[RMDB]
RNA sequence: GGGAACGACUCGAGUAGAGUCGAAAACGAAGACCGGCGGCCAAGCUCCAACUGUGAUCCCUACGCCGUGUGCAACGCCAUUGUUCGCACCUGCCUGCUCAACGAGUAGGCUGUGAGCGGUGCAACACCUUGGUAGAUCCUUCGGGAUCUACCAAGGAAAAGAAACAACAACAACAAC
Reactivity to DMS in 0.01 (KOAc 150mM, MgCl2 10mM, bicine 150mM(pH8.5), 24C), signal-to-noise 2, nucleotides 027 to 126: c020g000a060a070g020a060c030c070g020g030c040g020g020c040c070a040a120g010c050u010c020c070a060a120c090u000g010u020g020a090u000c020c000c000u010a130c110g000c020c040g020u000g000u000g030c020a060a050c030g000c020c040a110u000u000g030u000u000c150g020c000a050c040c050u000g000c000c000u020g000c010u000c000a190a150c220g000a000g020u000a000g000g040c030u000g000u010g020a080g010c050g020g010u020g030c050a020a050c160a080
Reactivity to 2A3 in 0.01 (KOAc 150mM, MgCl2 10mM, bicine 150mM(pH8.5), 24C), signal-to-noise 1, nucleotides 027 to 126: c000g010a050a000g040a030c000c020g040g000c000g000g050c040c020a020a000g020c000u030c010c010a140a130c170u100g040u080g100a080u000c010c010c000u010a020c040g010c020c000g070u090g000u020g000c010a070a010c040g040c070c060a040u010u160g000u040u060c100g000c010a000c030c010u020g000c000c000u000g030c000u040c040a170a130c140g000a040g000u020a030g000g000c020u020g000u010g000a110g000c050g000g030u010g000c000a000a040c020a070